[RMDB]
RNA sequence: GGGAACGACUCGAGUAGAGUCGAAAACAUCAGCAGAGCCACCAAGAGUCCGCACGUGACUGGUCAGGGGGAAGGUCUGGACGUUCAGGGUCUUUCAUCUACCAGGUGAGCACUCAUGAACAGUCUGUCGAGGGAGGAAGUUCGCUUCCUCCCUCGAAAAAGAAACAACAACAACAAC
Reactivity to DMS in 0.01 (KOAc 150mM, MgCl2 10mM, bicine 150mM(pH8.5), 24C), signal-to-noise 1, nucleotides 027 to 126: c130a030u000c130a100g000c070a070g020a070g010c030c080a050c020c000a050a120g000a050g040u000c020c070g040c060a050c090g020u000g000a080c020u020g000g010u000c170a010g020g000g000g000g020a080a010g020g010u000c050u000g010g020a050c120g010u010u000c030a070g000g000g010u010c020u000u040u000c010a000u000c020u000a130c210c090a110g030g000u000g000a010g010c300a060c010u000c020a110u010g000a030a040c060a070g000u020c000u020g010
Conditions: 150 mM KOAc, 10 mM MgCl2 and 150 mM bicine (pH 8.5), 24 C. Chemical mapping of a 177-nucleotide RNA with DMS. Values are in units of 0.01, from 0 to 300, in steps of 10. DMS adducts were read by reverse transcription with MarathonRT. It was measured as part of the RMDB library OK2TRN.